[RMDB]
RNA sequence: GGGAACGACUCGAGUAGAGUCGAAAAAGCCGAUAAUUUUGCCGGCCCUCUCGGGCUUUGUCUGCGGUUUUACCGGCUCGGUGCAUUCGCGCGCUAGCCGAUAGGGUCUAUCGCCAUGUCCGGUGCCUAUUACGUUUGAGUUCGCUCAAACGUAAUAAAAAGAAACAACAACAACAAC
Reactivity to DMS in 0.01 (KOAc 150mM, MgCl2 10mM, bicine 150mM(pH8.5), 24C), signal-to-noise 4, nucleotides 027 to 126: a080g000c030c010g000a060u020a070a090u000u000u010u010g020c060c090g000g000c010c010c000u000c200u020c170g010g000g010c020u000u000u010g030u000c110u000g020c030g010g000u000u010u000u000a040c040c000g010g000c030u000c030g010g020u000g000c030a070u000u000c170g010c140g020c020g000c080u000a040g000c010c000g000a100u010a060g020g000g010u010c040u000a040u000c020g010c010c060a060u000g010u000c020c010g010g010u000g010c010c020
Reactivity to 2A3 in 0.01 (KOAc 150mM, MgCl2 10mM, bicine 150mM(pH8.5), 24C), signal-to-noise 2, nucleotides 027 to 126: a000g010c030c010g010a050u090a130a180u110u150u120u100g020c020c040g030g020c000c000c010u050c020u070c000g030g020g000c000u140u120u130g040u060c040u070g000c000g000g050u000u020u050u070a020c000c000g000g060c080u060c040g020g000u100g040c030a030u050u180c090g020c000g000c000g000c200u020a010g010c010c030g050a160u220a120g120g020g010u020c020u010a050u070c000g030c020c010a010u030g010u020c040c000g020g050u020g040c020c010